Source: RMDB library RFMREP, as collected in RNAgym. Chemical mapping of a 177-nucleotide RNA with DMS. The RNA was probed in 150 mM KOAc, 10 mM MgCl2 and 150 mM bicine (pH 8.5) at 24 C. The DMS profile rests on 1,433 reads.

RNA sequence: GGGAACGACUCGAGUAGAGUCGAAAAGGCUGCUUCUCGCCUCUGUCCAGCUGUGUGGCCUUGGACAAGCCUCUUGGUUACACAGCUGGACAGAGGCACGAAACAGCCAAAGCCCUCUUCGGAGGGCCAGUUGGUAGAUCUUCGGAUCUACCAACUGAAAAGAAACAACAACAACAAC
Reactivity to DMS in 0.01 (KOAc 150mM, MgCl2 10mM, bicine 150mM(pH8.5), 24C), signal-to-noise 1, nucleotides 027 to 126: g020g030c000u000g000c010u000u000c000u000c250g010c000c000u000c010u000g000u000c000c010a010g000c000u000g020u000g000u000g000g020c020c010u000u010g000g030a110c180a140a110g020c190c080u000c050u000u000g000g030u000u000a010c000a000c000a020g000c000u000g000g000a000c000a000g020a010g010g000c010a000c030g000a000a000a030c020a000g020c000c000a010a050a090g010c000c000c000u000c000u000u020c110g010g010a020g000g000g000c010